[RMDB]
RNA sequence: GGGAACGACUCGAGUAGAGUCGAAAACCCCGUGUGGAACACACGACUAAGCUUCGGCUUAGUAAGAGCAACUUACGAUGGUAGGCUCCCCGGCGUGUCUCGAACCAUGCCGGGCCAAACCCAUAGGGCUGGCGGUCCCUGUGCGGUCAUUAUCGAAAUCCUCAUAGGGGUUCGCCCCUAUGAGGAUAAAAGAAACAACAACAACAAC
Reactivity to 2A3 in 0.01 (KOAc 150mM, MgCl2 10mM, bicine 150mM(pH8.5), 24C), signal-to-noise 1, nucleotides 027 to 156: c000c000c010c010g000u090g000u030g030g190a200a040c040a010c000a000c150g030a010c030u010a000a000g020c000u040u140c240g040g000c000u020u000a000g000u040a060a020g000a000g030c020a030a070c000u050u110a050c030g040a030u050g010g060u020a060g040g060c010u020c000c000c010c000g000g010c010g050u000g010u030c070u060c180g030a000a010c050c000a000u030g000c000c000g000g000g000c020c010a010a000a000c020c000c010a000u010a020g020g000g000c030u040g080g160c080g070g080u150c010c010c010u000g000u000g010c070g010g010u010c040a110u030u210a010u000c040g020a200a050

This 207-nucleotide RNA was probed chemically with 2A3. For 2A3, 844 sequencing reads were counted. Conditions: 150 mM KOAc, 10 mM MgCl2 and 150 mM bicine (pH 8.5), 24 C. Values cover nucleotides 27 to 156. It was measured as part of the RMDB library OK3TST.